[RMDB]
RNA sequence: GGGAACGACUCGAGUAGAGUCGAAAAGAGCUAUCAGUUCGCUGAUAGCUCGUGGGGCGUGUGGCGUAGUUGGUAGCGCGUUCGCUUAGCAUGCGAAAGGUCUCCGGUUCGACUCCGGACUCGUCCACCAACCUCUCCGCUUUUUCGAAAGCGGAGAAAGUUGUACUUGAUUCGUCAAGUACAACUUAAAAGAAACAACAACAACAAC
Reactivity to 2A3 in 0.01 (KOAc 150mM, MgCl2 10mM, bicine 150mM(pH8.5), 24C), signal-to-noise 6, nucleotides 027 to 156: g000a000g000c000u000a000u010c000a020g020u050u100c200g050c120u000g000a000u000a000g000c000u000c000g000u040g000g000g000g000c010g010u010g000u020g010g000c020g000u020a030g030u060u230g140g180u180a010g000c000g000c000g010u010u000c010g000c020u060u100a090g080c100a080u180g000c010g010a010a000a000g010g010u050c010u000c010c010g000g000u000u000c000g010a000c000u000c000c000g000g000a000c000u000c000g020u020c010c000a020c030c000a020a080c000c000u010c000u000c000c000g000c020u040u020u000u020u050c110g140a040a010a000g000c010g000g000a000g000a000
Reactivity to DMS in 0.01 (KOAc 150mM, MgCl2 10mM, bicine 150mM(pH8.5), 24C), signal-to-noise 5, nucleotides 027 to 156: g000a020g020c000u000a000u000c010a020g040u000u000c300g050c000u010g000a030u000a010g000c010u000c000g000u000g000g010g000g010c040g000u000g010u000g020g010c030g030u000a070g020u010u010g020g020u000a060g020c020g010c040g020u000u000c020g020c020u000u000a190g020c190a160u000g020c000g000a020a050a080g010g000u000c010u000c010c010g010g010u000u000c030g010a300c090u000c010c010g020g000a030c040u000c010g020u010c020c010a040c010c010a020a090c050c030u000c010u000c000c000g020c000u020u000u000u000u000c200g020a030a020a040g010c000g000g010a000g010a000
The data come from the RNA Mapping Database (RMDB), library ARCHII. Chemical mapping of a 207-nucleotide RNA with 2A3 and DMS. The RNA was probed in 150 mM KOAc, 10 mM MgCl2 and 150 mM bicine (pH 8.5) at 24 C. Values cover nucleotides 27 to 156. 2A3 adducts were read by reverse transcription with SuperScript II with manganese. For DMS the reverse transcriptase was MarathonRT.